This 177-nucleotide RNA was probed chemically with 2A3 and DMS. For 2A3, 1,647 sequencing reads were counted. 2A3 is a SHAPE reagent: it acylates the 2'-hydroxyl of flexible nucleotides of all four kinds. The reactions ran in a buffer of 150 mM KOAc, 10 mM MgCl2 and 150 mM bicine (pH 8.5), at 24 C.

[RMDB]
RNA sequence: GGGAACGACUCGAGUAGAGUCGAAAAGUAAAGCGCGAGGGCUCGUGAGGAUUUGGAGGCGUGAGAGAGAUUGUAGGGAUCCUGCCUCCUCCCUCUCCGCGCGGCGCCUCCUAGCCGAUAUAAAAAAUCAUACCACCCUAUUCGUAGGGUGGUAUGAAAAAGAAACAACAACAACAAC
Reactivity to 2A3 in 0.01 (KOAc 150mM, MgCl2 10mM, bicine 150mM(pH8.5), 24C), signal-to-noise 2, nucleotides 027 to 126: g070u080a070a000a100g010c020g030c020g040a110g040g130g000c030u050c090g020u040g070a070g090g010a090u300u100u130g000g000a010g010g020c020g010u200g020a140g000a020g010a000g000a070u020u100g130u210a120g050g080g070a010u040c010c010u020g000c000c000u000c010c000u000c010c010c010u000c000u000c000c000g000c000g000c000g010g010c040g040c010c000u060c000c000u010a030g000c010c060g080a020u070a000u130a200a160a000a010a000a010
Reactivity to DMS in 0.01 (KOAc 150mM, MgCl2 10mM, bicine 150mM(pH8.5), 24C), signal-to-noise 3, nucleotides 027 to 126: g020u010a070a200a140g020c020g020c050g050a090g030g000g000c060u010c070g010u000g010a030g000g000a080u000u010u010g010g010a020g010g000c030g010u020g000a120g000a070g000a130g000a020u000u010g010u010a110g030g000g020a050u000c020c020u000g010c020c000u000c000c020u010c130c020c020u000c020u000c060c080g020c030g000c050g000g000c110g010c020c020u000c020c010u000a070g010c050c030g020a060u010a070u020a010a030a080a070a060a120